RNA sequence: GGGAACGACUCGAGUAGAGUCGAAAACGAUCAGUACGUUCGCGUACUGAUCGAAGCUACUGGAGACAGUAGCAAGUCUAAGACCUUGUUAGGGGGAAACAAGGAAAAAUGGAGGAAGGGCGGACCUCCAUACUUAGACAACCUCUAACCGCCCAAAACGUACCAGUGAUUUCGAUCACUGGUACGUAAAAGAAACAACAACAACAAC
Reactivity to 2A3 in 0.01 (KOAc 150mM, MgCl2 10mM, bicine 150mM(pH8.5), 24C), signal-to-noise 1, nucleotides 027 to 156: c000g000a000u000c000a010g030u000a000c020g030u040u070c190g000c010g100u010a000c000u010g000a000u000c000g000a000a000g000c000u000a000c000u000g000g020a030g010a050c010a000g000u000a000g000c000a020a030g000u000c010u000a010a090g010a230c010c010u020u010g040u030u130a300g000g010g000g000g030a020a010a000c000a000a010g010g000a070a130a120a060a000u030g020g000a010g000g020a050a300g020g000g000c030g030g000a220c010c000u000c000c010a010u040a040c010u000u000a000g000a000c010a010a070c010c010u100c020u070a090a030c020c000g000c010c010c010a000a000a000

This 207-nucleotide RNA was probed chemically with 2A3. For 2A3, 1,084 sequencing reads were counted. Conditions: 150 mM KOAc, 10 mM MgCl2 and 150 mM bicine (pH 8.5), 24 C. Values cover nucleotides 27 to 156.